[RMDB]
RNA sequence: GGGAACGACUCGAGUAGAGUCGAAAAUAGGGAAUUCGGCAAGUUAGUCCCGUACCUUCGGAAGAAGGGAUGCCUGCUCCGGAACGGAGCAGGUCGCAGUGACUCGGAAGCUCGGACUGUCUAGUAACAACAUAGGUGACCGCAAAUCCGCAAGGACGACGUAUGUAGAGUUCGCUCUACAUACGUCAAAAGAAACAACAACAACAAC
Reactivity to 2A3 in 0.01 (KOAc 150mM, MgCl2 10mM, bicine 150mM(pH8.5), 24C), signal-to-noise 4, nucleotides 027 to 156: u120a010g030g000g020a030a070u110u060c050g020g000c030a060a030g030u110u080a020g010u050c020c020c000g010u060a040c020c000u010u030c030g020g130a100a060g010a010a010g100g000g020a020u150g010c000c000u000g000c000u000c000c010g140g150a220a130c250g020g000a000g000c020a000g000g000u010c020g010c030a020g020u020g090a040c000u010c040g060g040a070a010g020c030u020c040g020g030a040c030u020g000u020c000u040a050g040u060a090a070c090a060a000c020a050u110a040g030g030u020g060a040c020c000g010c050a080a090a050u040c020c020g010c080a050a030g020g020a010c080
Reactivity to DMS in 0.01 (KOAc 150mM, MgCl2 10mM, bicine 150mM(pH8.5), 24C), signal-to-noise 2, nucleotides 027 to 156: u010a050g010g020g020a070a090u000u000c050g020g010c040a110a150g030u000u000a060g020u000c010c000c040g010u000a090c030c000u010u000c000g000g010a240a220g000a040a030g000g020g000a070u000g000c010c000u000g010c000u000c000c000g030g010a140a240c150g020g020a080g050c000a000g000g030u000c070g010c090a090g010u000g000a050c030u000c050g000g000a180a140g010c020u010c080g020g010a100c080u010g020u010c010u000a090g030u000a090a110c010a080a100c070a060u010a050g000g010u000g010a090c030c010g000c060a070a030a120u000c010c000g000c120a100a100g020g030a140c090